RNA sequence: GGGAACGACUCGAGUAGAGUCGAAAAGAUAUGGAGUUCUUCGCAUGGUGUGGUACUUCAACAGCUAUUACUCGGAAACGAGUACUGUAGACAUGAAGACCACACCAUGCGAAGAACUCCUAAGUCACGUUAAUACAUUGUUCGCAAUGUAUUAACGAAAAGAAACAACAACAACAAC
Reactivity to DMS in 0.01 (KOAc 150mM, MgCl2 10mM, bicine 150mM(pH8.5), 24C), signal-to-noise 6, nucleotides 027 to 126: g020a040u000a300u010g010g000a020g020u010u000c000u000u000c000g000c020a010u000g000g000u000g040u000g010g000u000a120c010u000u000c000a050a100c300a230g000c070u000a020u010u000a010c000u000c000g010g000a140a140a220c010g000a010g010u000a010c300u000g000u000a010g010a090c130a170u000g000a010a000g000a120c000c000a010c000a000c000c000a000u000g010c000g010a000a000g010a000a000c000u000c010c000u000a010a050g000u000c040a280